Structure probing data (2A3) for a 207-nucleotide construct. The data come from the RNA Mapping Database (RMDB), library M2RFPK. Conditions: 150 mM KOAc, 10 mM MgCl2 and 150 mM bicine (pH 8.5), 24 C. The 2A3 profile rests on 641 reads. For 2A3 the reverse transcriptase was SuperScript II with manganese.

[RMDB]
RNA sequence: GGGAACGACUCGAGUAGAGUCGAAAAGCAACUUAGGAUUUUAGGCGCCCCGUGCGUGUCUCGAACCAUGCCGGGCCAAACCCACGGGGGCUGGCGGUCCCCGUGCGGUCAAAAUCAAACCGCUGGAAAAACAGUUCUAGCUUCGGCUAGAACUGAAGAAGAUCACAUUCUUCGGAAUGUGAUCUUCAAAAGAAACAACAACAACAAC
Reactivity to 2A3 in 0.01 (KOAc 150mM, MgCl2 10mM, bicine 150mM(pH8.5), 24C), signal-to-noise 1, nucleotides 027 to 156: g020c030a000a130c070u180u240a220g010g090a230u200u150u090u160a070g120g000c020g090c050c050c010c040g020u080g050c000g000u050g000u030c060u050c300g040a010a010c020c000a010u070g010c000c000g030g000g000c020c000a130a010a010c000c000c000a000c010g000g000g000g000g000c020u030g000g000c010g000g040u000c000c000c000c000g020u010g000c080g020g000u050c010a050a050a000a140u110c040a100a110a060c040c000g000c030u050g000g010a090a090a040a000a000c000a000g000u000u010c000u000a000g000c000u010u020c160g020g000c010u000a000g000a000a000c000u010g010a000a000